[RMDB]
RNA sequence: GGGAACGACUCGAGUAGAGUCGAAAAAUAUAAAAGACUGUGUAGUCAUUUAAGAACUACACCCAUAUAGUAACACAUCACUUGAUUAAAGACAAUACUAUUUUUAGAGUCAUUAAUUUAAAAUAUGCACUGCUAUCCCAUUCGUGGGAUAGCAGUGAAAAGAAACAACAACAACAAC
Reactivity to 2A3 in 0.01 (KOAc 150mM, MgCl2 10mM, bicine 150mM(pH8.5), 24C), signal-to-noise 2, nucleotides 027 to 126: a000u200a000u060a130a000a060a210g110a010c100u060g000u000g000u010a000g040u010c000a000u050u270u300a120a010g000a000a000c000u010a000c020a000c000c000c040a200u240a020u100a030g120u120a110a030c100a040c000a060u100c030a060c030u030u060g070a060u000u090a170a000a000g010a000c050a030a030u110a180c020u000a090u280u100u060u030u070a030g000a050g040u000c010a060u010u090a060a000u080u000u030a130a050a110a130u300a040u090g010